[RMDB]
RNA sequence: GGGAACGACUCGAGUAGAGUCGAAAAGAAGACGUGACGAAAAGUCACGAAAAAUAAAACAGGCAACCUCCAGCCUGAAAAAGGAGGAAAGAUCGAAAGAUCACUCGUGGGAGACCACGAGAAAAGACGUAAAUGCGGAGUUCGCUCCGCAUUUACGAAAAGAAACAACAACAACAAC
Reactivity to 2A3 in 0.01 (KOAc 150mM, MgCl2 10mM, bicine 150mM(pH8.5), 24C), signal-to-noise 1, nucleotides 027 to 126: g050a000a020g070a010c010g000u020g000a030c020g070a180a180a200a000g000u000c020a000c030g060a000a070a000a000a000u230a000a020a000a000c050a000g010g000c000a060a040c000c000u020c020c000a010g040c000c000u000g120a090a000a000a020a000g000g050a010g000g000a080a040a000g000a020u000c060g030a060a000a020g030a000u000c040a000c020u000c000g000u000g000g020g000a150g010a030c000c000a000c000g000a000g040a010a000a010a000g100a010